[RMDB]
RNA sequence: GGGAACGACUCGAGUAGAGUCGAAAAGAUAUGGAAGUGCGGGAGUUCGAUUGCUAGAACUACAGGAUGUAAUCGGAAACGAUUAUUUCCUGCUAGCAAUCGAACGAAGAACGCACUUCCUAAGUCACUAAUAGAAUCCGUUCGCGGAUUCUAUUAGAAAAGAAACAACAACAACAAC
Reactivity to DMS in 0.01 (KOAc 150mM, MgCl2 10mM, bicine 150mM(pH8.5), 24C), signal-to-noise 3, nucleotides 027 to 126: g010a050u000a300u010g000g000a000a000g020u000g010c000g000g000g000a060g020u000u010c000g020a020u000u010g000c010u010a010g000a080a020c110u030a300c010a020g000g010a010u000g000u000a000a000u000c010g000g010a150a130a270c010g030a020u010u010a000u000u000u000c000c000u000g000c000u000a000g000c020a010a010u000c010g010a000a010c000g000a080a120g000a140a200c000g010c000a000c010u000u000c000c000u010a010a090g000u010c020a270
Reactivity to 2A3 in 0.01 (KOAc 150mM, MgCl2 10mM, bicine 150mM(pH8.5), 24C), signal-to-noise 1, nucleotides 027 to 126: g000a010u080a040u190g010g000a000a000g000u000g020c020g000g000g030a070g000u020u000c000g000a010u010u010g000c000u030a040g030a140a090c250u300a080c300a010g000g010a000u020g000u020a020a000u020c030g010g030a090a070a080c020g010a010u000u000a010u020u020u000c010c000u010g040c020u000a010g000c020a000a000u000c010g000a000a000c000g000a010a010g020a000a000c010g000c000a000c000u000u000c000c010u010a060a010g000u020c010a010